[RMDB]
RNA sequence: GGGAACGACUCGAGUAGAGUCGAAAACCUGUUAUCUGACCAAUAACAGAAUGCACCACAGCGUAAAAUCAUCUGAUUGGGUGAGUUGGUAGCACCGCCAUUUGACGAACGAACGCCAAGCCUAAGCACUACGAGUAUGUGUUCGCACAUACUCGAACGUGGUAUGUCAGUUCGCUGACAUACCACGAAAAGAAACAACAACAACAAC
Reactivity to 2A3 in 0.01 (KOAc 150mM, MgCl2 10mM, bicine 150mM(pH8.5), 24C), signal-to-noise 3, nucleotides 027 to 156: c020c000u000g010u010u010a050u030c020u030g030a070c000c020a030a030u020a020a020c000a010g060a060a050u170g030c000a040c060c020a040c020a030g040c040g030u100a040a070a070a120u040c030a020u000c030u070g090a150u060u190g060g040g000u020g020a100g020u040u090g070g010u050a000g000c020a010c030c000g000c010c010a050u050u030u100g050a050c050g010a120a000c020g020a060a010c030g050c010c050a050a020g010c010c010u100a080a010g040c030a060c190u160a040c060g000a000g000u010a000u000g010u000g010u000u070c090g020c080a000c000a000u000a000c000u010c000g000a020a010
Reactivity to DMS in 0.01 (KOAc 150mM, MgCl2 10mM, bicine 150mM(pH8.5), 24C), signal-to-noise 1, nucleotides 027 to 156: c040c000u020g000u000u000a000u000c000u000g000a220c200c110a220a100u000a030a040c020a030g040a030a130u000g000c100a100c090c050a100c020a060g040c010g000u000a030a020a110a080u010c060a020u010c040u000g020a140u000u000g000g020g030u010g040a050g020u000u030g030g000u000a030g020c060a070c050c040g030c030c010a100u000u000u000g020a000c040g000a050a100c150g010a070a110c040g060c020c030a100a180g030c030c010u000a130a130g020c100a060c070u000a240c060g030a050g000u000a020u000g030u000g020u000u010c290g020c050a040c000a020u000a000c000u000c000g030a020a120